[RMDB]
RNA sequence: GGGAACGACUCGAGUAGAGUCGAAAACGGAGUGAUCCAGGUGUGGAGGCUGCACGAGUGAGAAUGCAGGCAUGAGUAGCGAAAGACGAGUGAGAAACUCGUCCGCCGAAUGACCAAGGGUUCCUGGCAUUAUUGAGAUCUUCGGAUCUCAAUAAUGAAAAGAAACAACAACAACAAC
Reactivity to 2A3 in 0.01 (KOAc 150mM, MgCl2 10mM, bicine 150mM(pH8.5), 24C), signal-to-noise 9, nucleotides 027 to 126: c040g040g020a060g030u090g030a070u050c030c010a020g020g020u070g040u070g050g050a050g030g010c030u030g010c040a030c060g040a050g060u100g020a070g050a100a040u090g020c040a020g050g000c010a030u060g020a030g060u140a020g030c010g040a140a080a010g010a010c010g000a000g000u030g020a090g110a100a080a010c000u000c000g000u000c010c000g000c000c010g040a050a050u080g070a120c010c020a050a040g050g010g010u050u020c000c000u010g030g000
Reactivity to DMS in 0.01 (KOAc 150mM, MgCl2 10mM, bicine 150mM(pH8.5), 24C), signal-to-noise 9, nucleotides 027 to 126: c090g010g000a080g020u020g000a100u010c020c020a070g010g010u010g020u000g010g010a130g000g010c030u000g000c050a060c070g010a120g020u010g010a090g010a100a110u010g010c050a070g000g010c040a040u000g010a150g010u020a100g020c020g010a100a160a110g000a010c000g000a020g000u000g000a180g000a130a120a030c000u010c000g010u000c000c030g010c150c020g010a090a060u010g000a100c030c030a080a100g010g000g010u000u000c010c010u000g010g010